An RNA of 177 nucleotides, treated with 2A3 and DMS and read out base by base. The RNA was probed in 150 mM KOAc, 10 mM MgCl2 and 150 mM bicine (pH 8.5) at 24 C. The DMS profile rests on 1,731 reads.

[RMDB]
RNA sequence: GGGAACGACUCGAGUAGAGUCGAAAAGCUAAUUUUUUUUGUGGGCCCACUUUCGAUAGUUAGUCACUAGCGGAAGCUCAGGAAGAGCAGCUUUGGUCUCUCAGCACUUUAAUCCUGCUUCUCGUUCGUAGAAGUACAAGUUCGCUUGUACUUCUACAAAAGAAACAACAACAACAAC
Reactivity to 2A3 in 0.01 (KOAc 150mM, MgCl2 10mM, bicine 150mM(pH8.5), 24C), signal-to-noise 2, nucleotides 027 to 126: g000c010u020a070a110u100u150u040u010u000u060u260u180g090u050g030g130g090c070c080c000a010c010u040u040u050c010g010a010u000a040g030u150u030a030g050u130c050a000c040u000a000g030c000g000g030a030a010g020c020u050c050a010g110g030a060a050g000a020g040c020a000g040c000u060u040u070g050g030u020c020u000c010u040c090a020g040c010a020c060u060u020u120a030a020u090c000c010u010g040c020u090u010c040u010c020g050u100u040c040
Reactivity to DMS in 0.01 (KOAc 150mM, MgCl2 10mM, bicine 150mM(pH8.5), 24C), signal-to-noise 2, nucleotides 027 to 126: g010c050u000a060a020u020u010u010u010u000u000u000u000g010u000g000g000g010c040c030c050a130c040u000u000u000c010g010a040u000a020g010u000u000a140g010u010c240a200c010u010a030g010c020g010g010a020a030g000c060u000c080a030g000g010a060a040g010a050g020c180a030g010c010u000u000u000g000g010u000c020u000c030u010c100a100g010c080a030c050u000u010u010a080a090u010c060c040u000g000c070u000u010c000u000c060g020u000u010c170